[RMDB]
Structure probing data (2A3) for a 177-nucleotide construct.
The data come from the RNA Mapping Database (RMDB), library OK1LIB.
2A3 adducts were read by reverse transcription with SuperScript II with manganese.

RNA sequence: GGGAACGACUCGAGUAGAGUCGAAAAGAAUAUAAGAGCGCAGUAACUGUGAGAGCAAACUGCGCCCGGACUGUAGGAUCCGGUGGCACAGCAACGCUCAAUCACAACACGCUGUGCCACUUGAAGAGCACGCCUCGAUAUUCGUAUCGAGGCGUGCAAAAGAAACAACAACAACAAC
Reactivity to 2A3 in 0.01 (KOAc 150mM, MgCl2 10mM, bicine 150mM(pH8.5), 24C), signal-to-noise 1, nucleotides 027 to 126: g020a040a040u080a020u020a140a020g060a000g000c000g040c000a000g000u060a040a140c020u000g000u010g110a080g000a000g070c040a030a030a030c000u000g020c000g000c000c000c000g000g010a020c130u160g100u070a090g010g000a140u030c000c000g000g000u000g000g000c000a000c000a000g040c060a000a090c030g020c120u170c070a040a230u150c070a080c030a110a090c050a020c050g120c000u000g000u000g000c010c010a000c000u000u030g100a100a140g050a020